[RMDB]
RNA sequence: GGGAACGACUCGAGUAGAGUCGAAAAGUGUUUUUGAUGGUGACAAAAACAGCAUUAAUUGUGCAAGACAAGAAGCCAUUCGAAUGGUUAGAGUAUUAACUGUUAUAAAAGAGUACAUUAAUGAAUGUGACAGUGAUUAUCACAAGGAAAGAAUGAACCAGGCGAUAAAUUUCGAUUUAUCGCCUGGAAAAGAAACAACAACAACAAC
Reactivity to 2A3 in 0.01 (KOAc 150mM, MgCl2 10mM, bicine 150mM(pH8.5), 24C), signal-to-noise 2, nucleotides 027 to 156: g060u020g040u060u010u010u000u040g050a060u100g030g090u050g020a020c030a010a060a020a060a050c070a030g040c020a040u070u050a050a130u170u130g000u010g030c010a120a000g030a060c020a050a040g100a050a020g020c000c000a000u090u150c090g060a130a010u030g000g000u030u060a050g000a020g090u030a010u090u110a050a100c020u020g020u090u040a110u060a180a110a040a030g090a010g050u070a030c000a020u110u070a050a060u110g080a120a010u070g050u030g030a010c010a000g040u030g050a030u010u100a010u130c000a000c010a070a020g050g000a080a060a030g020a050a030u060g000a010a000
Reactivity to DMS in 0.01 (KOAc 150mM, MgCl2 10mM, bicine 150mM(pH8.5), 24C), signal-to-noise 1, nucleotides 027 to 156: g020u000g020u000u010u010u000u000g010a010u020g000g090u010g000a230c020a010a030a030a070a080c030a060g020c020a040u000u010a130a190u000u010g000u000g010c010a030a170g010a250c040a050a120g040a110a160g030c020c010a130u000u000c170g010a100a050u000g000g000u000u000a040g020a160g060u010a110u010u000a020a080c020u020g020u000u010a160u000a020a060a100a110g020a300g010u000a020c030a010u000u010a030a060u000g000a200a090u010g010u000g020a020c030a020g000u030g000a090u000u000a040u000c020a020c050a010a110g000g010a060a080a110g010a090a130u030g030a070a280
An RNA of 207 nucleotides, treated with 2A3 and DMS and read out base by base. It was measured as part of the RMDB library OK3TST. The reactions ran in a buffer of 150 mM KOAc, 10 mM MgCl2 and 150 mM bicine (pH 8.5), at 24 C. Reactivities are given for positions 27 through 156. The DMS profile rests on 1,769 reads.